Conditions: 150 mM KOAc, 10 mM MgCl2 and 150 mM bicine (pH 8.5), 24 C.
The record gives the reactivity of an RNA of 207 nucleotides to 2A3.
2A3 adducts were read by reverse transcription with SuperScript II with manganese.
Source: RMDB library M2RFPK, as collected in RNAgym.
RNA sequence: GGGAACGACUCGAGUAGAGUCGAAAAACUUUGAUGGCGGUACUAUGAAUUGAUGCAAGGUGUGGAGCGACCUUAAACAGUUCUGGUGGUGCUCUGAAUGCAGUGCUCUACUGAGAUUAUAAAAUAGCAUGCAUAGAGUGCUUCGGCACUCUAUGAAGCUUGAAGCUUCGUUCGCGAAGCUUCAAGCAAAAGAAACAACAACAACAAC
Reactivity to 2A3 in 0.01 (KOAc 150mM, MgCl2 10mM, bicine 150mM(pH8.5), 24C), signal-to-noise 1, nucleotides 027 to 156: a000c090u060u020u170g050a050u100g030g000c030g000g100u040a050c030u050a060u220g050a060a030u040u070g080a050u080g060c040a000a030g050g000u020g020u060g020g010a000g000c040g020a020c000c000u040u040a100a070a000c020a020g040u080u070c050u150g040g010u010g030g050u050g010c000u000c000u000g010a030a010u090g000c000a000g010u010g050c020u000c000u080a060c000u030g010a000g030a100u120u120a130u200a080a000a050a040u150a050g090c030a050u120g000c000a000u000a010g000a000g000u000g000c000u010u000c050g090g000c000a000c000u000c000u010a000u010g010a000a010